[RMDB]
The record gives the reactivity of an RNA of 207 nucleotides to DMS. The DMS profile rests on 2,850 reads. It was measured as part of the RMDB library OK3TST.
RNA sequence: GGGAACGACUCGAGUAGAGUCGAAAAACAAUGGAAUAAGGUGUAACAGCAAAGACCCACCACCUCUUUGUCUGUACCUCUCUGAUCAGAAGCAGCAAUCAUCAAUCUAAGCACAUAUGCCUGAUACUUAGAGGACAGGGUCCAUUUUGCUUAUCCUUAACUUACUCAUCUUCGGAUGAGUAAGUUAAAAAGAAACAACAACAACAAC
Reactivity to DMS in 0.01 (KOAc 150mM, MgCl2 10mM, bicine 150mM(pH8.5), 24C), signal-to-noise 2, nucleotides 027 to 156: a040c040a050a040u000g010g000a100a190u000a080a060g000g040u000g000u000a100a070c040a300g010c040a030a040a050g000a020c020c000c040a210c220c060a050c020c010u000c010u000u010u000g000u010c010u000g000u000a070c030c030u000c010u000c010u000g010a180u020c050a020g000a150a080g000c040a030g050c040a040a040u000c060a170u000c070a000a120u000c020u000a020a110g030c020a030c050a090u010a100u000g010c090c000u000g010a160u000a030c010u000u000a040g040a020g000g000a090c090a050g000g030g020u000c010c010a030u000u000u000u000g000c020u000u000a140u000c010c030u000